Chemical mapping of a 177-nucleotide RNA with DMS and 2A3. Reactivities are rounded to 0.1 and cut off at 0 and 3. The reactions ran in a buffer of 150 mM KOAc, 10 mM MgCl2 and 150 mM bicine (pH 8.5), at 24 C. For DMS, 1,302 sequencing reads were counted.
RNA sequence: GGGAACGACUCGAGUAGAGUCGAAAAGAGAUACGCAAGACGUAGGCACCUAAACUACAAAGGAUCAUUGGGUGAGAAUCGAAGCCAUCAAGAGGCGUCUUGAGAUUCAAAAGAUCCGAGAGGAUCAGGUAACGUACAGCUUCGGCUGUACGUUACCAAAAGAAACAACAACAACAAC
Reactivity to DMS in 0.01 (KOAc 150mM, MgCl2 10mM, bicine 150mM(pH8.5), 24C), signal-to-noise 1, nucleotides 027 to 126: g000a120g000a020u010a020c060g000c010a110a070g020a050c120g010u000a010g030g000c000a040c000c030u000a010a040a190c010u020a030c240a100a160a040g000g000a150u010c030a150u020u030g030g000g050u000g000a000g000a030a020u000c080g000a080a060g020c040c010a050u030c000a110a030g000a120g000g050c000g000u000c000u000u010g000a110g010a180u000u000c000a150a010a060a020g000a070u000c000c000g000a120g000a190g030g000a070u000c040a060
Reactivity to 2A3 in 0.01 (KOAc 150mM, MgCl2 10mM, bicine 150mM(pH8.5), 24C), signal-to-noise 2, nucleotides 027 to 126: g120a000g000a040u050a050c040g000c010a000a000g070a000c010g030u030a040g040g040c010a010c000c000u070a040a050a080c100u170a020c100a050a180a030g030g000a090u070c010a020u090u130g000g010g000u020g070a070g070a070a030u080c010g040a040a000g030c020c000a010u080c080a060a030g050a030g140g000c000g030u020c000u010u020g010a030g000a010u000u000c000a000a000a000a000g010a000u040c000c000g000a000g000a000g000g040a030u000c010a030